[RMDB]
RNA sequence: GGGAACGACUCGAGUAGAGUCGAAAAUAGGCGAUUCGCGCUUUCGUAAGUAAUCGAUAGCGCGAGAAAAGAUAUUUGCGUAUGUUGACUUAAAUACGCAUAUACAUUAAGUCAAGAUCGCUUAAAAGGGUUAUGAUAUCUUCGGAUAUCAUAACCCAAAAGAAACAACAACAACAAC
Reactivity to 2A3 in 0.01 (KOAc 150mM, MgCl2 10mM, bicine 150mM(pH8.5), 24C), signal-to-noise 3, nucleotides 027 to 126: u100a000g010g000c000g010a000u000u060c000g000c000g010c000u000u050u000c000g010u030a210a230g070u060a070a190u070c000g000a000u000a010g020c000g000c000g010a000g010a000a040a000a000g050a000u010a020u050u040u010g000c010g000u020a020u000g290u090u100g150a210c160u180u230a050a050a050u010a000c000g000c010a000u020a000u000a010c040a030u160u150a050a010g030u020c020a020a020g010a100u020c000g000c000u030u070a000a110a070a030
Reactivity to DMS in 0.01 (KOAc 150mM, MgCl2 10mM, bicine 150mM(pH8.5), 24C), signal-to-noise 2, nucleotides 027 to 126: u010a000g000g020c010g020a000u000u000c000g010c010g020c000u000u010u000c000g070u000a080a170g020u020a190a080u000c030g010a000u000a000g000c000g000c000g000a030g000a010a040a030a020g000a140u010a030u000u000u010g000c000g060u040a000u000g000u080u000g020a150c270u010u020a080a020a000u000a020c050g000c020a000u000a000u000a140c110a100u010u040a160a110g000u020c110a240a140g060a020u010c000g020c010u000u000a030a070a130a170